[RMDB]
RNA sequence: GGGAACGACUCGAGUAGAGUCGAAAACUACGGUUCGCCGUAGCCUAAUCCUAAGUCAUCCCGUUUGACGCGUAUUGUCAGCUAACAUUCGGAAACGAAUGCUAGCUUGGAUUUAUACGCCGAGGGAUGAUAUGGAAUGUUCUAUGUUCGCAUAGAAAAGGCAGUAUGUAUUCGUACAUACUGCCUUAAAAGAAACAACAACAACAAC
Reactivity to DMS in 0.01 (KOAc 150mM, MgCl2 10mM, bicine 150mM(pH8.5), 24C), signal-to-noise 3, nucleotides 027 to 156: c000u000a010c000g030g010u000u010c300g040c000c010g010u010a000g010c020c040u000a300a140u000c010c010u000a090a230g020u000c000a030u020c010c000c000g020u000u000u000g020a070c120g000c000g020u010a010u010u000g010u000c010a050g030c000u000a000a000c000a040u000u000c000g010g020a180a100a280c000g010a030a010u010g030c000u000a000g010c000u000u000g020g020a050u000u000u000a010u000a000c000g010c000c000g000a110g010g020g020a010u000g000a000u000a080u010g000g010a130a130u010g010u010u000c010u000a030u000g020u000u000c220g030c030a030u000a040g010a050a090
Reactivity to 2A3 in 0.01 (KOAc 150mM, MgCl2 10mM, bicine 150mM(pH8.5), 24C), signal-to-noise 4, nucleotides 027 to 156: c010u010a010c000g000g070u030u060c300g040c100c010g000u000a000g020c020c000u100a150a130u070c000c000u020a110a020g020u000c000a000u020c000c000c030g050u120u090u190g080a060c030g000c000g010u000a000u010u020g020u010c000a010g010c010u000a010a010c000a000u000u000c020g090g020a100a020a030c010g010a000a000u010g000c010u000a000g000c000u000u030g000g000a000u000u200u000a000u000a000c010g000c010c020g000a040g000g000g000a000u000g000a000u000a010u040g010g020a090a090u150g030u100u010c000u030a010u030g010u040u120c270g100c130a000u150a110g030a010a190